[RMDB]
RNA sequence: GGGAACGACUCGAGUAGAGUCGAAAAGAGGGUGGCUGUUCUCUGCGGAAGAGGCCUUCUGAUGCACCCCCAGCUUCCAGGUUCCUGACAGGUCUUCUCCAGCACACUCACACCACGUGGACUCUGGAGGGUCACUGGCACAAGGAACUGUGGGCAACAUAAAUGGUGCAUUCGUGCACCAUUUAUGAAAAGAAACAACAACAACAAC
Reactivity to DMS in 0.01 (KOAc 150mM, MgCl2 10mM, bicine 150mM(pH8.5), 24C), signal-to-noise 2, nucleotides 027 to 156: g000a090g010g030g050u000g020g000c030u010g020u000u000c020u000c030u020g030c130g030g030a180a040g010a130g010g000c020c010u000u000c060u010g010a180u010g000c050a130c060c020c010c000c050a110g000c030u010u000c020c010a140g010g000u000u000c000c010u000g000a070c020a050g010g000u000c030u000u000c000u000c010c000a030g030c170a050c050a030c050u000c040a100c120a150c130c110a080c200g000u010g010g000a110c090u000c000u010g000g000a070g000g000g000u000c030a090c010u000g000g010c080a110c130a130a140g000g010a010a020c040u000g010u000g040g020g000c040a120a200
Reactivity to 2A3 in 0.01 (KOAc 150mM, MgCl2 10mM, bicine 150mM(pH8.5), 24C), signal-to-noise 4, nucleotides 027 to 156: g060a030g030g030g010u050g050g150c060u070g090u200u030c050u000c060u100g090c110g090g070a060a030g030a040g060g040c030c010u060u050c020u020g060a090u120g010c080a080c020c000c000c000c040a020g000c030u180u080c010c010a040g060g030u000u000c000c000u010g000a000c000a000g020g010u000c000u300u080c000u090c000c000a020g000c060a020c000a020c040u110c040a070c010a040c150c040a110c100g000u010g040g010a030c060u030c000u120g000g000a040g020g000g000u050c080a090c300u000g010g010c100a030c040a230a040g000g000a010a010c000u030g090u060g010g000g020c030a040a020